[RMDB]
RNA sequence: GGGAACGACUCGAGUAGAGUCGAAAAUAUUACAUCUUCGGAUGUAAUAACUGGUGGUGGCUGGCUUGUUGCUAGUGGCGCAACUGUUCCCAUGACUGCGCAAUCGCUCUGAAUUCGUUCAGAGCAACGUCCAAGACAAUUUCGAUUGUCUUGGACGAAAAGAAACAACAACAACAAC
Reactivity to 2A3 in 0.01 (KOAc 150mM, MgCl2 10mM, bicine 150mM(pH8.5), 24C), signal-to-noise 2, nucleotides 027 to 126: u030a000u000u000a000c000a000u000c010u030u060c210g130g010a000u000g010u010a000a000u010a010a040c100u070g060g020u060g050g070u110g060g000c000u000g030g000c020u070u160g080u070u120g230c010u020a030g040u020g130g050c000g000c000a010a030c010u020g050u030u000c000c000c000a000u040g090a020c100u070g000c030g000c010a010a080u130c070g000c010u000c010u010g010a000a020u080u070c210g060u100u000c000a000g010a000g000c000a000a010
Reactivity to DMS in 0.01 (KOAc 150mM, MgCl2 10mM, bicine 150mM(pH8.5), 24C), signal-to-noise 2, nucleotides 027 to 126: u000a030u010u010a030c000a010u000c000u000u010c230g030g010a010u020g020u010a000a000u000a020a050c100u000g000g030u010g000g000u000g010g000c030u000g010g020c030u000u000g030u000u000g020c020u000a050g060u000g000g000c020g020c030a050a070c050u010g010u010u000c000c010c000a110u010g010a080c160u000g000c000g040c040a220a070u000c160g000c000u000c000u000g000a040a030u000u010c140g040u000u000c000a010g000a030g010c010a010a010
The record gives the reactivity of an RNA of 177 nucleotides to 2A3 and DMS. It was measured as part of the RMDB library M2PK50. For DMS, 1,573 sequencing reads were counted. For 2A3 the reverse transcriptase was SuperScript II with manganese.